This 177-nucleotide RNA was probed chemically with 2A3 and DMS. DMS adducts were read by reverse transcription with MarathonRT. The RNA was probed in 150 mM KOAc, 10 mM MgCl2 and 150 mM bicine (pH 8.5) at 24 C.

[RMDB]
RNA sequence: GGGAACGACUCGAGUAGAGUCGAAAACAAGGAUUUUGCAACCUACACAAACCAAUGCGCUUUGGAACCAUCAAAAAGUCUAUCGAUAACGCAAUCCAUAUUGAGAAGGCAAAUGGAUCCGACAUUGGAAGGUGACGAUUUUCGAAUCGUCACCUUCAAAAGAAACAACAACAACAAC
Reactivity to 2A3 in 0.01 (KOAc 150mM, MgCl2 10mM, bicine 150mM(pH8.5), 24C), signal-to-noise 2, nucleotides 027 to 126: c000a050a080g070g060a140u040u120u170u300g020c010a080a000c000c020u170a050c090a070c000a100a120a030c010c030a030a070u020g030c140g050c020u180u100u030g100g000a040a010c020c000a030u080c100a090a090a060a030a030g030u000c010u020a030u020c010g080a060u050a080a090c090g050c140a010a050u000c040c070a030u040a010u090u010g030a040g010a170a130g130g000c010a070a030a030u010g010g000a010u030c040c030g020a010c020a040u060u070g080
Reactivity to DMS in 0.01 (KOAc 150mM, MgCl2 10mM, bicine 150mM(pH8.5), 24C), signal-to-noise 1, nucleotides 027 to 126: c050a020a170g010g000a110u000u000u000u050g010c060a160a170c060c000u020a030c070a010c150a060a250a080c080c000a030a060u000g010c120g030c080u030u000u000g010g000a030a110c010c010a010u000c180a080a060a020a050a060g010u000c000u000a210u000c000g080a000u030a010a150c190g000c020a110a050u010c100c070a020u000a020u000u000g000a080g000a060a140g000g000c050a100a080a010u020g000g000a120u000c000c000g010a170c060a050u000u000g000